Chemical mapping of a 207-nucleotide RNA with DMS and 2A3. The 2A3 profile rests on 708 reads. The data come from the RNA Mapping Database (RMDB), library OK3TST. The RNA was probed in 150 mM KOAc, 10 mM MgCl2 and 150 mM bicine (pH 8.5) at 24 C.
RNA sequence: GGGAACGACUCGAGUAGAGUCGAAAAGAAGAAGAAAGGUAUAAUUAGUACCUGGAACUUCCAACAUAUAAUACUGGGAAAACUUCAGAGUAGAUUCUCAUUUGGAGACAAGGUUACCCUGUAGCAAGAAAGAGCCUUCGUGUGUGACCAGAGAAGAUAGCAAGUAGUAUUUCGAUACUACUUGCUAAAAAGAAACAACAACAACAAC
Reactivity to DMS in 0.01 (KOAc 150mM, MgCl2 10mM, bicine 150mM(pH8.5), 24C), signal-to-noise 1, nucleotides 027 to 156: g010a080a050g010a110a110g000a300a260a020g000g000u010a010u000a190a190u030u050a160g100u000a020c030c000u030g000g040a200a200c030u070u010c010c040a000a210c070a150u030a110u000a040a070u010a020c020u000g040g050g020a040a070a140a070c010u000u000c010a040g010a030g050u000a080g000a240u000u000c010u010c030a150u010u000u000g020g010a090g010a070c080a110a050g000g010u000u000a120c030c010c010u000g000u000a030g000c060a070a080g000a070a080a150g000a120g000c030c060u000u000c030g000u000g020u030g060u000g000a080c010c090a030g020a160g000a080a090g000a190
Reactivity to 2A3 in 0.01 (KOAc 150mM, MgCl2 10mM, bicine 150mM(pH8.5), 24C), signal-to-noise 1, nucleotides 027 to 156: g050a010a000g050a020a010g010a020a050a020g000g020u010a040u040a110a300u220u180a120g040u000a000c000c020u000g000g020a030a010c010u000u000c020c000a040a010c020a050u250a030u160a300a040u100a110c030u050g010g000g000a020a070a050a060c060u100u070c030a010g020a050g090u100a030g030a140u170u010c050u030c050a040u040u050u130g090g010a070g010a010c040a040a030g060g000u040u100a060c000c010c000u010g010u010a050g030c030a060a030g000a170a060a000g020a030g030c030c000u060u070c050g020u030g040u060g020u050g090a030c000c010a030g030a000g130a060a240g070a110